[RMDB]
Chemical mapping of a 207-nucleotide RNA with DMS and 2A3. Values cover nucleotides 27 to 156. For 2A3, 2,044 sequencing reads were counted. For 2A3 the reverse transcriptase was SuperScript II with manganese. High 2A3 reactivity points to a flexible backbone, as in loops and unpaired stretches. The DMS profile rests on 2,671 reads.
RNA sequence: GGGAACGACUCGAGUAGAGUCGAAAAGGACGUUCUGGACACAGCUGGGCAGGAGGAAUUCAGCGCCAUGCGGGAGCAAUACAUGCGCACGGGGGAUGGCUUCCUCAUCGUCUACUCCGUCACUGACAAGGCCAGCUUUGAGCACGUGGACCGCUAACCGAUUAUUACUGUUCGCAGUAAUAAUCGGAAAAGAAACAACAACAACAAC
Reactivity to DMS in 0.01 (KOAc 150mM, MgCl2 10mM, bicine 150mM(pH8.5), 24C), signal-to-noise 1, nucleotides 027 to 156: g000g090a100c050g010u000u010c070u030g010g020a070c050a050c060a060g020c010u000g030g000g010c120a110g050g010a110g000g030a130a110u000u000c030a020g010c070g010c050c020a090u000g020c030g000g010g050a110g020c050a110a130u000a080c080a080u020g010c060g070c030a090c050g000g000g040g010g010a070u000g010g000c090u000u000c050c030u000c030a160u010c030g000u000c020u000a030c030u010c020c050g010u000c040a090c040u000g030a100c040a050a080g000g020c020c020a070g000c010u000u010u000g040a050g000c040a090c000g010u000g020g020a080c030c020g000c030u000a050a240
Reactivity to 2A3 in 0.01 (KOAc 150mM, MgCl2 10mM, bicine 150mM(pH8.5), 24C), signal-to-noise 3, nucleotides 027 to 156: g090g000a020c050g020u070u070c090u050g020g020a020c010a010c020a080g000c050u050g020g030g030c030a060g030g060a050g000g030a020a010u110u050c010a040g030c040g020c070c010a020u050g020c010g010g030g040a070g040c030a000a080u090a160c050a040u150g060c060g000c100a100c100g030g000g000g000g030a050u100g020g030c000u070u040c000c020u050c000a070u100c030g050u010c020u010a030c030u000c010c040g040u030c030a030c120u060g010a030c040a110a050g060g000c010c000a010g000c040u050u030u070g060a010g010c060a010c040g030u030g030g030a040c000c000g000c030u020a060a000